Conditions: 150 mM KOAc, 10 mM MgCl2 and 150 mM bicine (pH 8.5), 24 C. The record gives the reactivity of an RNA of 207 nucleotides to 2A3 and DMS. For 2A3 the reverse transcriptase was SuperScript II with manganese. It was measured as part of the RMDB library OK3TST.
RNA sequence: GGGAACGACUCGAGUAGAGUCGAAAAAAGAUAGACUUUGCCUUGUGAUGGAGAGUAGCAAGAUUCUGGAAGGGCAUGCAAGACAGGAAAUGCUGUUAUAGCCAUUUUUGGAAAACACAGUUUUUUACAGCGUAUAUCAUAUCAUUUCCUAUCAGUGAACGUACUGUAUGUUCGCAUACAGUACGUUAAAAGAAACAACAACAACAAC
Reactivity to 2A3 in 0.01 (KOAc 150mM, MgCl2 10mM, bicine 150mM(pH8.5), 24C), signal-to-noise 6, nucleotides 027 to 156: a000a000g130a020u150a020g060a030c030u060u040u110g040c000c010u030u040g040u040g060a100u090g040g010a030g000a010g040u040a020g020c030a060a020g020a160u140u030c030u070g010g040a060a020g050g000g010c020a000u040g030c020a040a090g030a100c050a020g030g020a020a020a020u030g010c020u020g020u060u040a060u040a060g020c020c020a130u100u090u060u100u130g090g030a060a020a020a000c140a040c040a110g030u020u020u010u010u040u100a080c040a010g020c010g060u060a030u000a010u210c030a020u030a010u120c010a020u020u030u000c000c000u060a080u110c060a040g070u070g230
Reactivity to DMS in 0.01 (KOAc 150mM, MgCl2 10mM, bicine 150mM(pH8.5), 24C), signal-to-noise 3, nucleotides 027 to 156: a080a070g010a130u000a100g000a090c040u000u010u000g020c010c030u000u000g020u010g010a120u000g010g000a100g000a110g010u000a110g000c040a080a070g000a150u000u000c010u020g000g010a140a060g020g010g030c040a070u010g020c050a080a090g020a060c050a030g020g010a020a020a060u000g030c150u000g010u000u000a070u000a100g030c010c050a220u000u000u000u000u020g010g000a080a010a070a060c070a080c150a120g040u000u000u010u000u010u000a090c090a040g010c060g000u000a090u000a040u000c040a080u000a100u010c020a040u000u000u000c010c010u000a050u000c010a130g020u040g020